[RMDB]
RNA sequence: GGGAACGACUCGAGUAGAGUCGAAAACAAAACUGACCAUCUAUGAGGUCAUACAUCGUCAUAGAAAAACAAAACAAAACUGACCAGAUAUGAGGUCAUACAUCGUCAUAGCAAACAAAACAACAAAAGUACCGUCGGUAUUCGUACCGACGGUACUAAAAGAAACAACAACAACAAC
Reactivity to 2A3 in 0.01 (KOAc 150mM, MgCl2 10mM, bicine 150mM(pH8.5), 24C), signal-to-noise 2, nucleotides 027 to 126: c000a000a140a040a080c120u000g000a000c000c000a010u000c000u000a000u030g000a000g010g000u060c000a000u250a030c040a110u070c070g180u040c000a060u030a000g090a000a010a020a000a010c010a000a120a000a100c080a000a180a040a250c080u000g000a040c020c000a000g000a110u200a050u280g130a090g030g000u000c000a000u070a120c090a110u250c080g080u030c010a000u130a020g030c050a040a040a040c090a130a200a050a000c090a030a000c030a050a060a060

The record gives the reactivity of an RNA of 177 nucleotides to 2A3. For 2A3 the reverse transcriptase was SuperScript II with manganese. It was measured as part of the RMDB library OK1LIB. 2A3 is a SHAPE reagent: it acylates the 2'-hydroxyl of flexible nucleotides of all four kinds. Conditions: 150 mM KOAc, 10 mM MgCl2 and 150 mM bicine (pH 8.5), 24 C.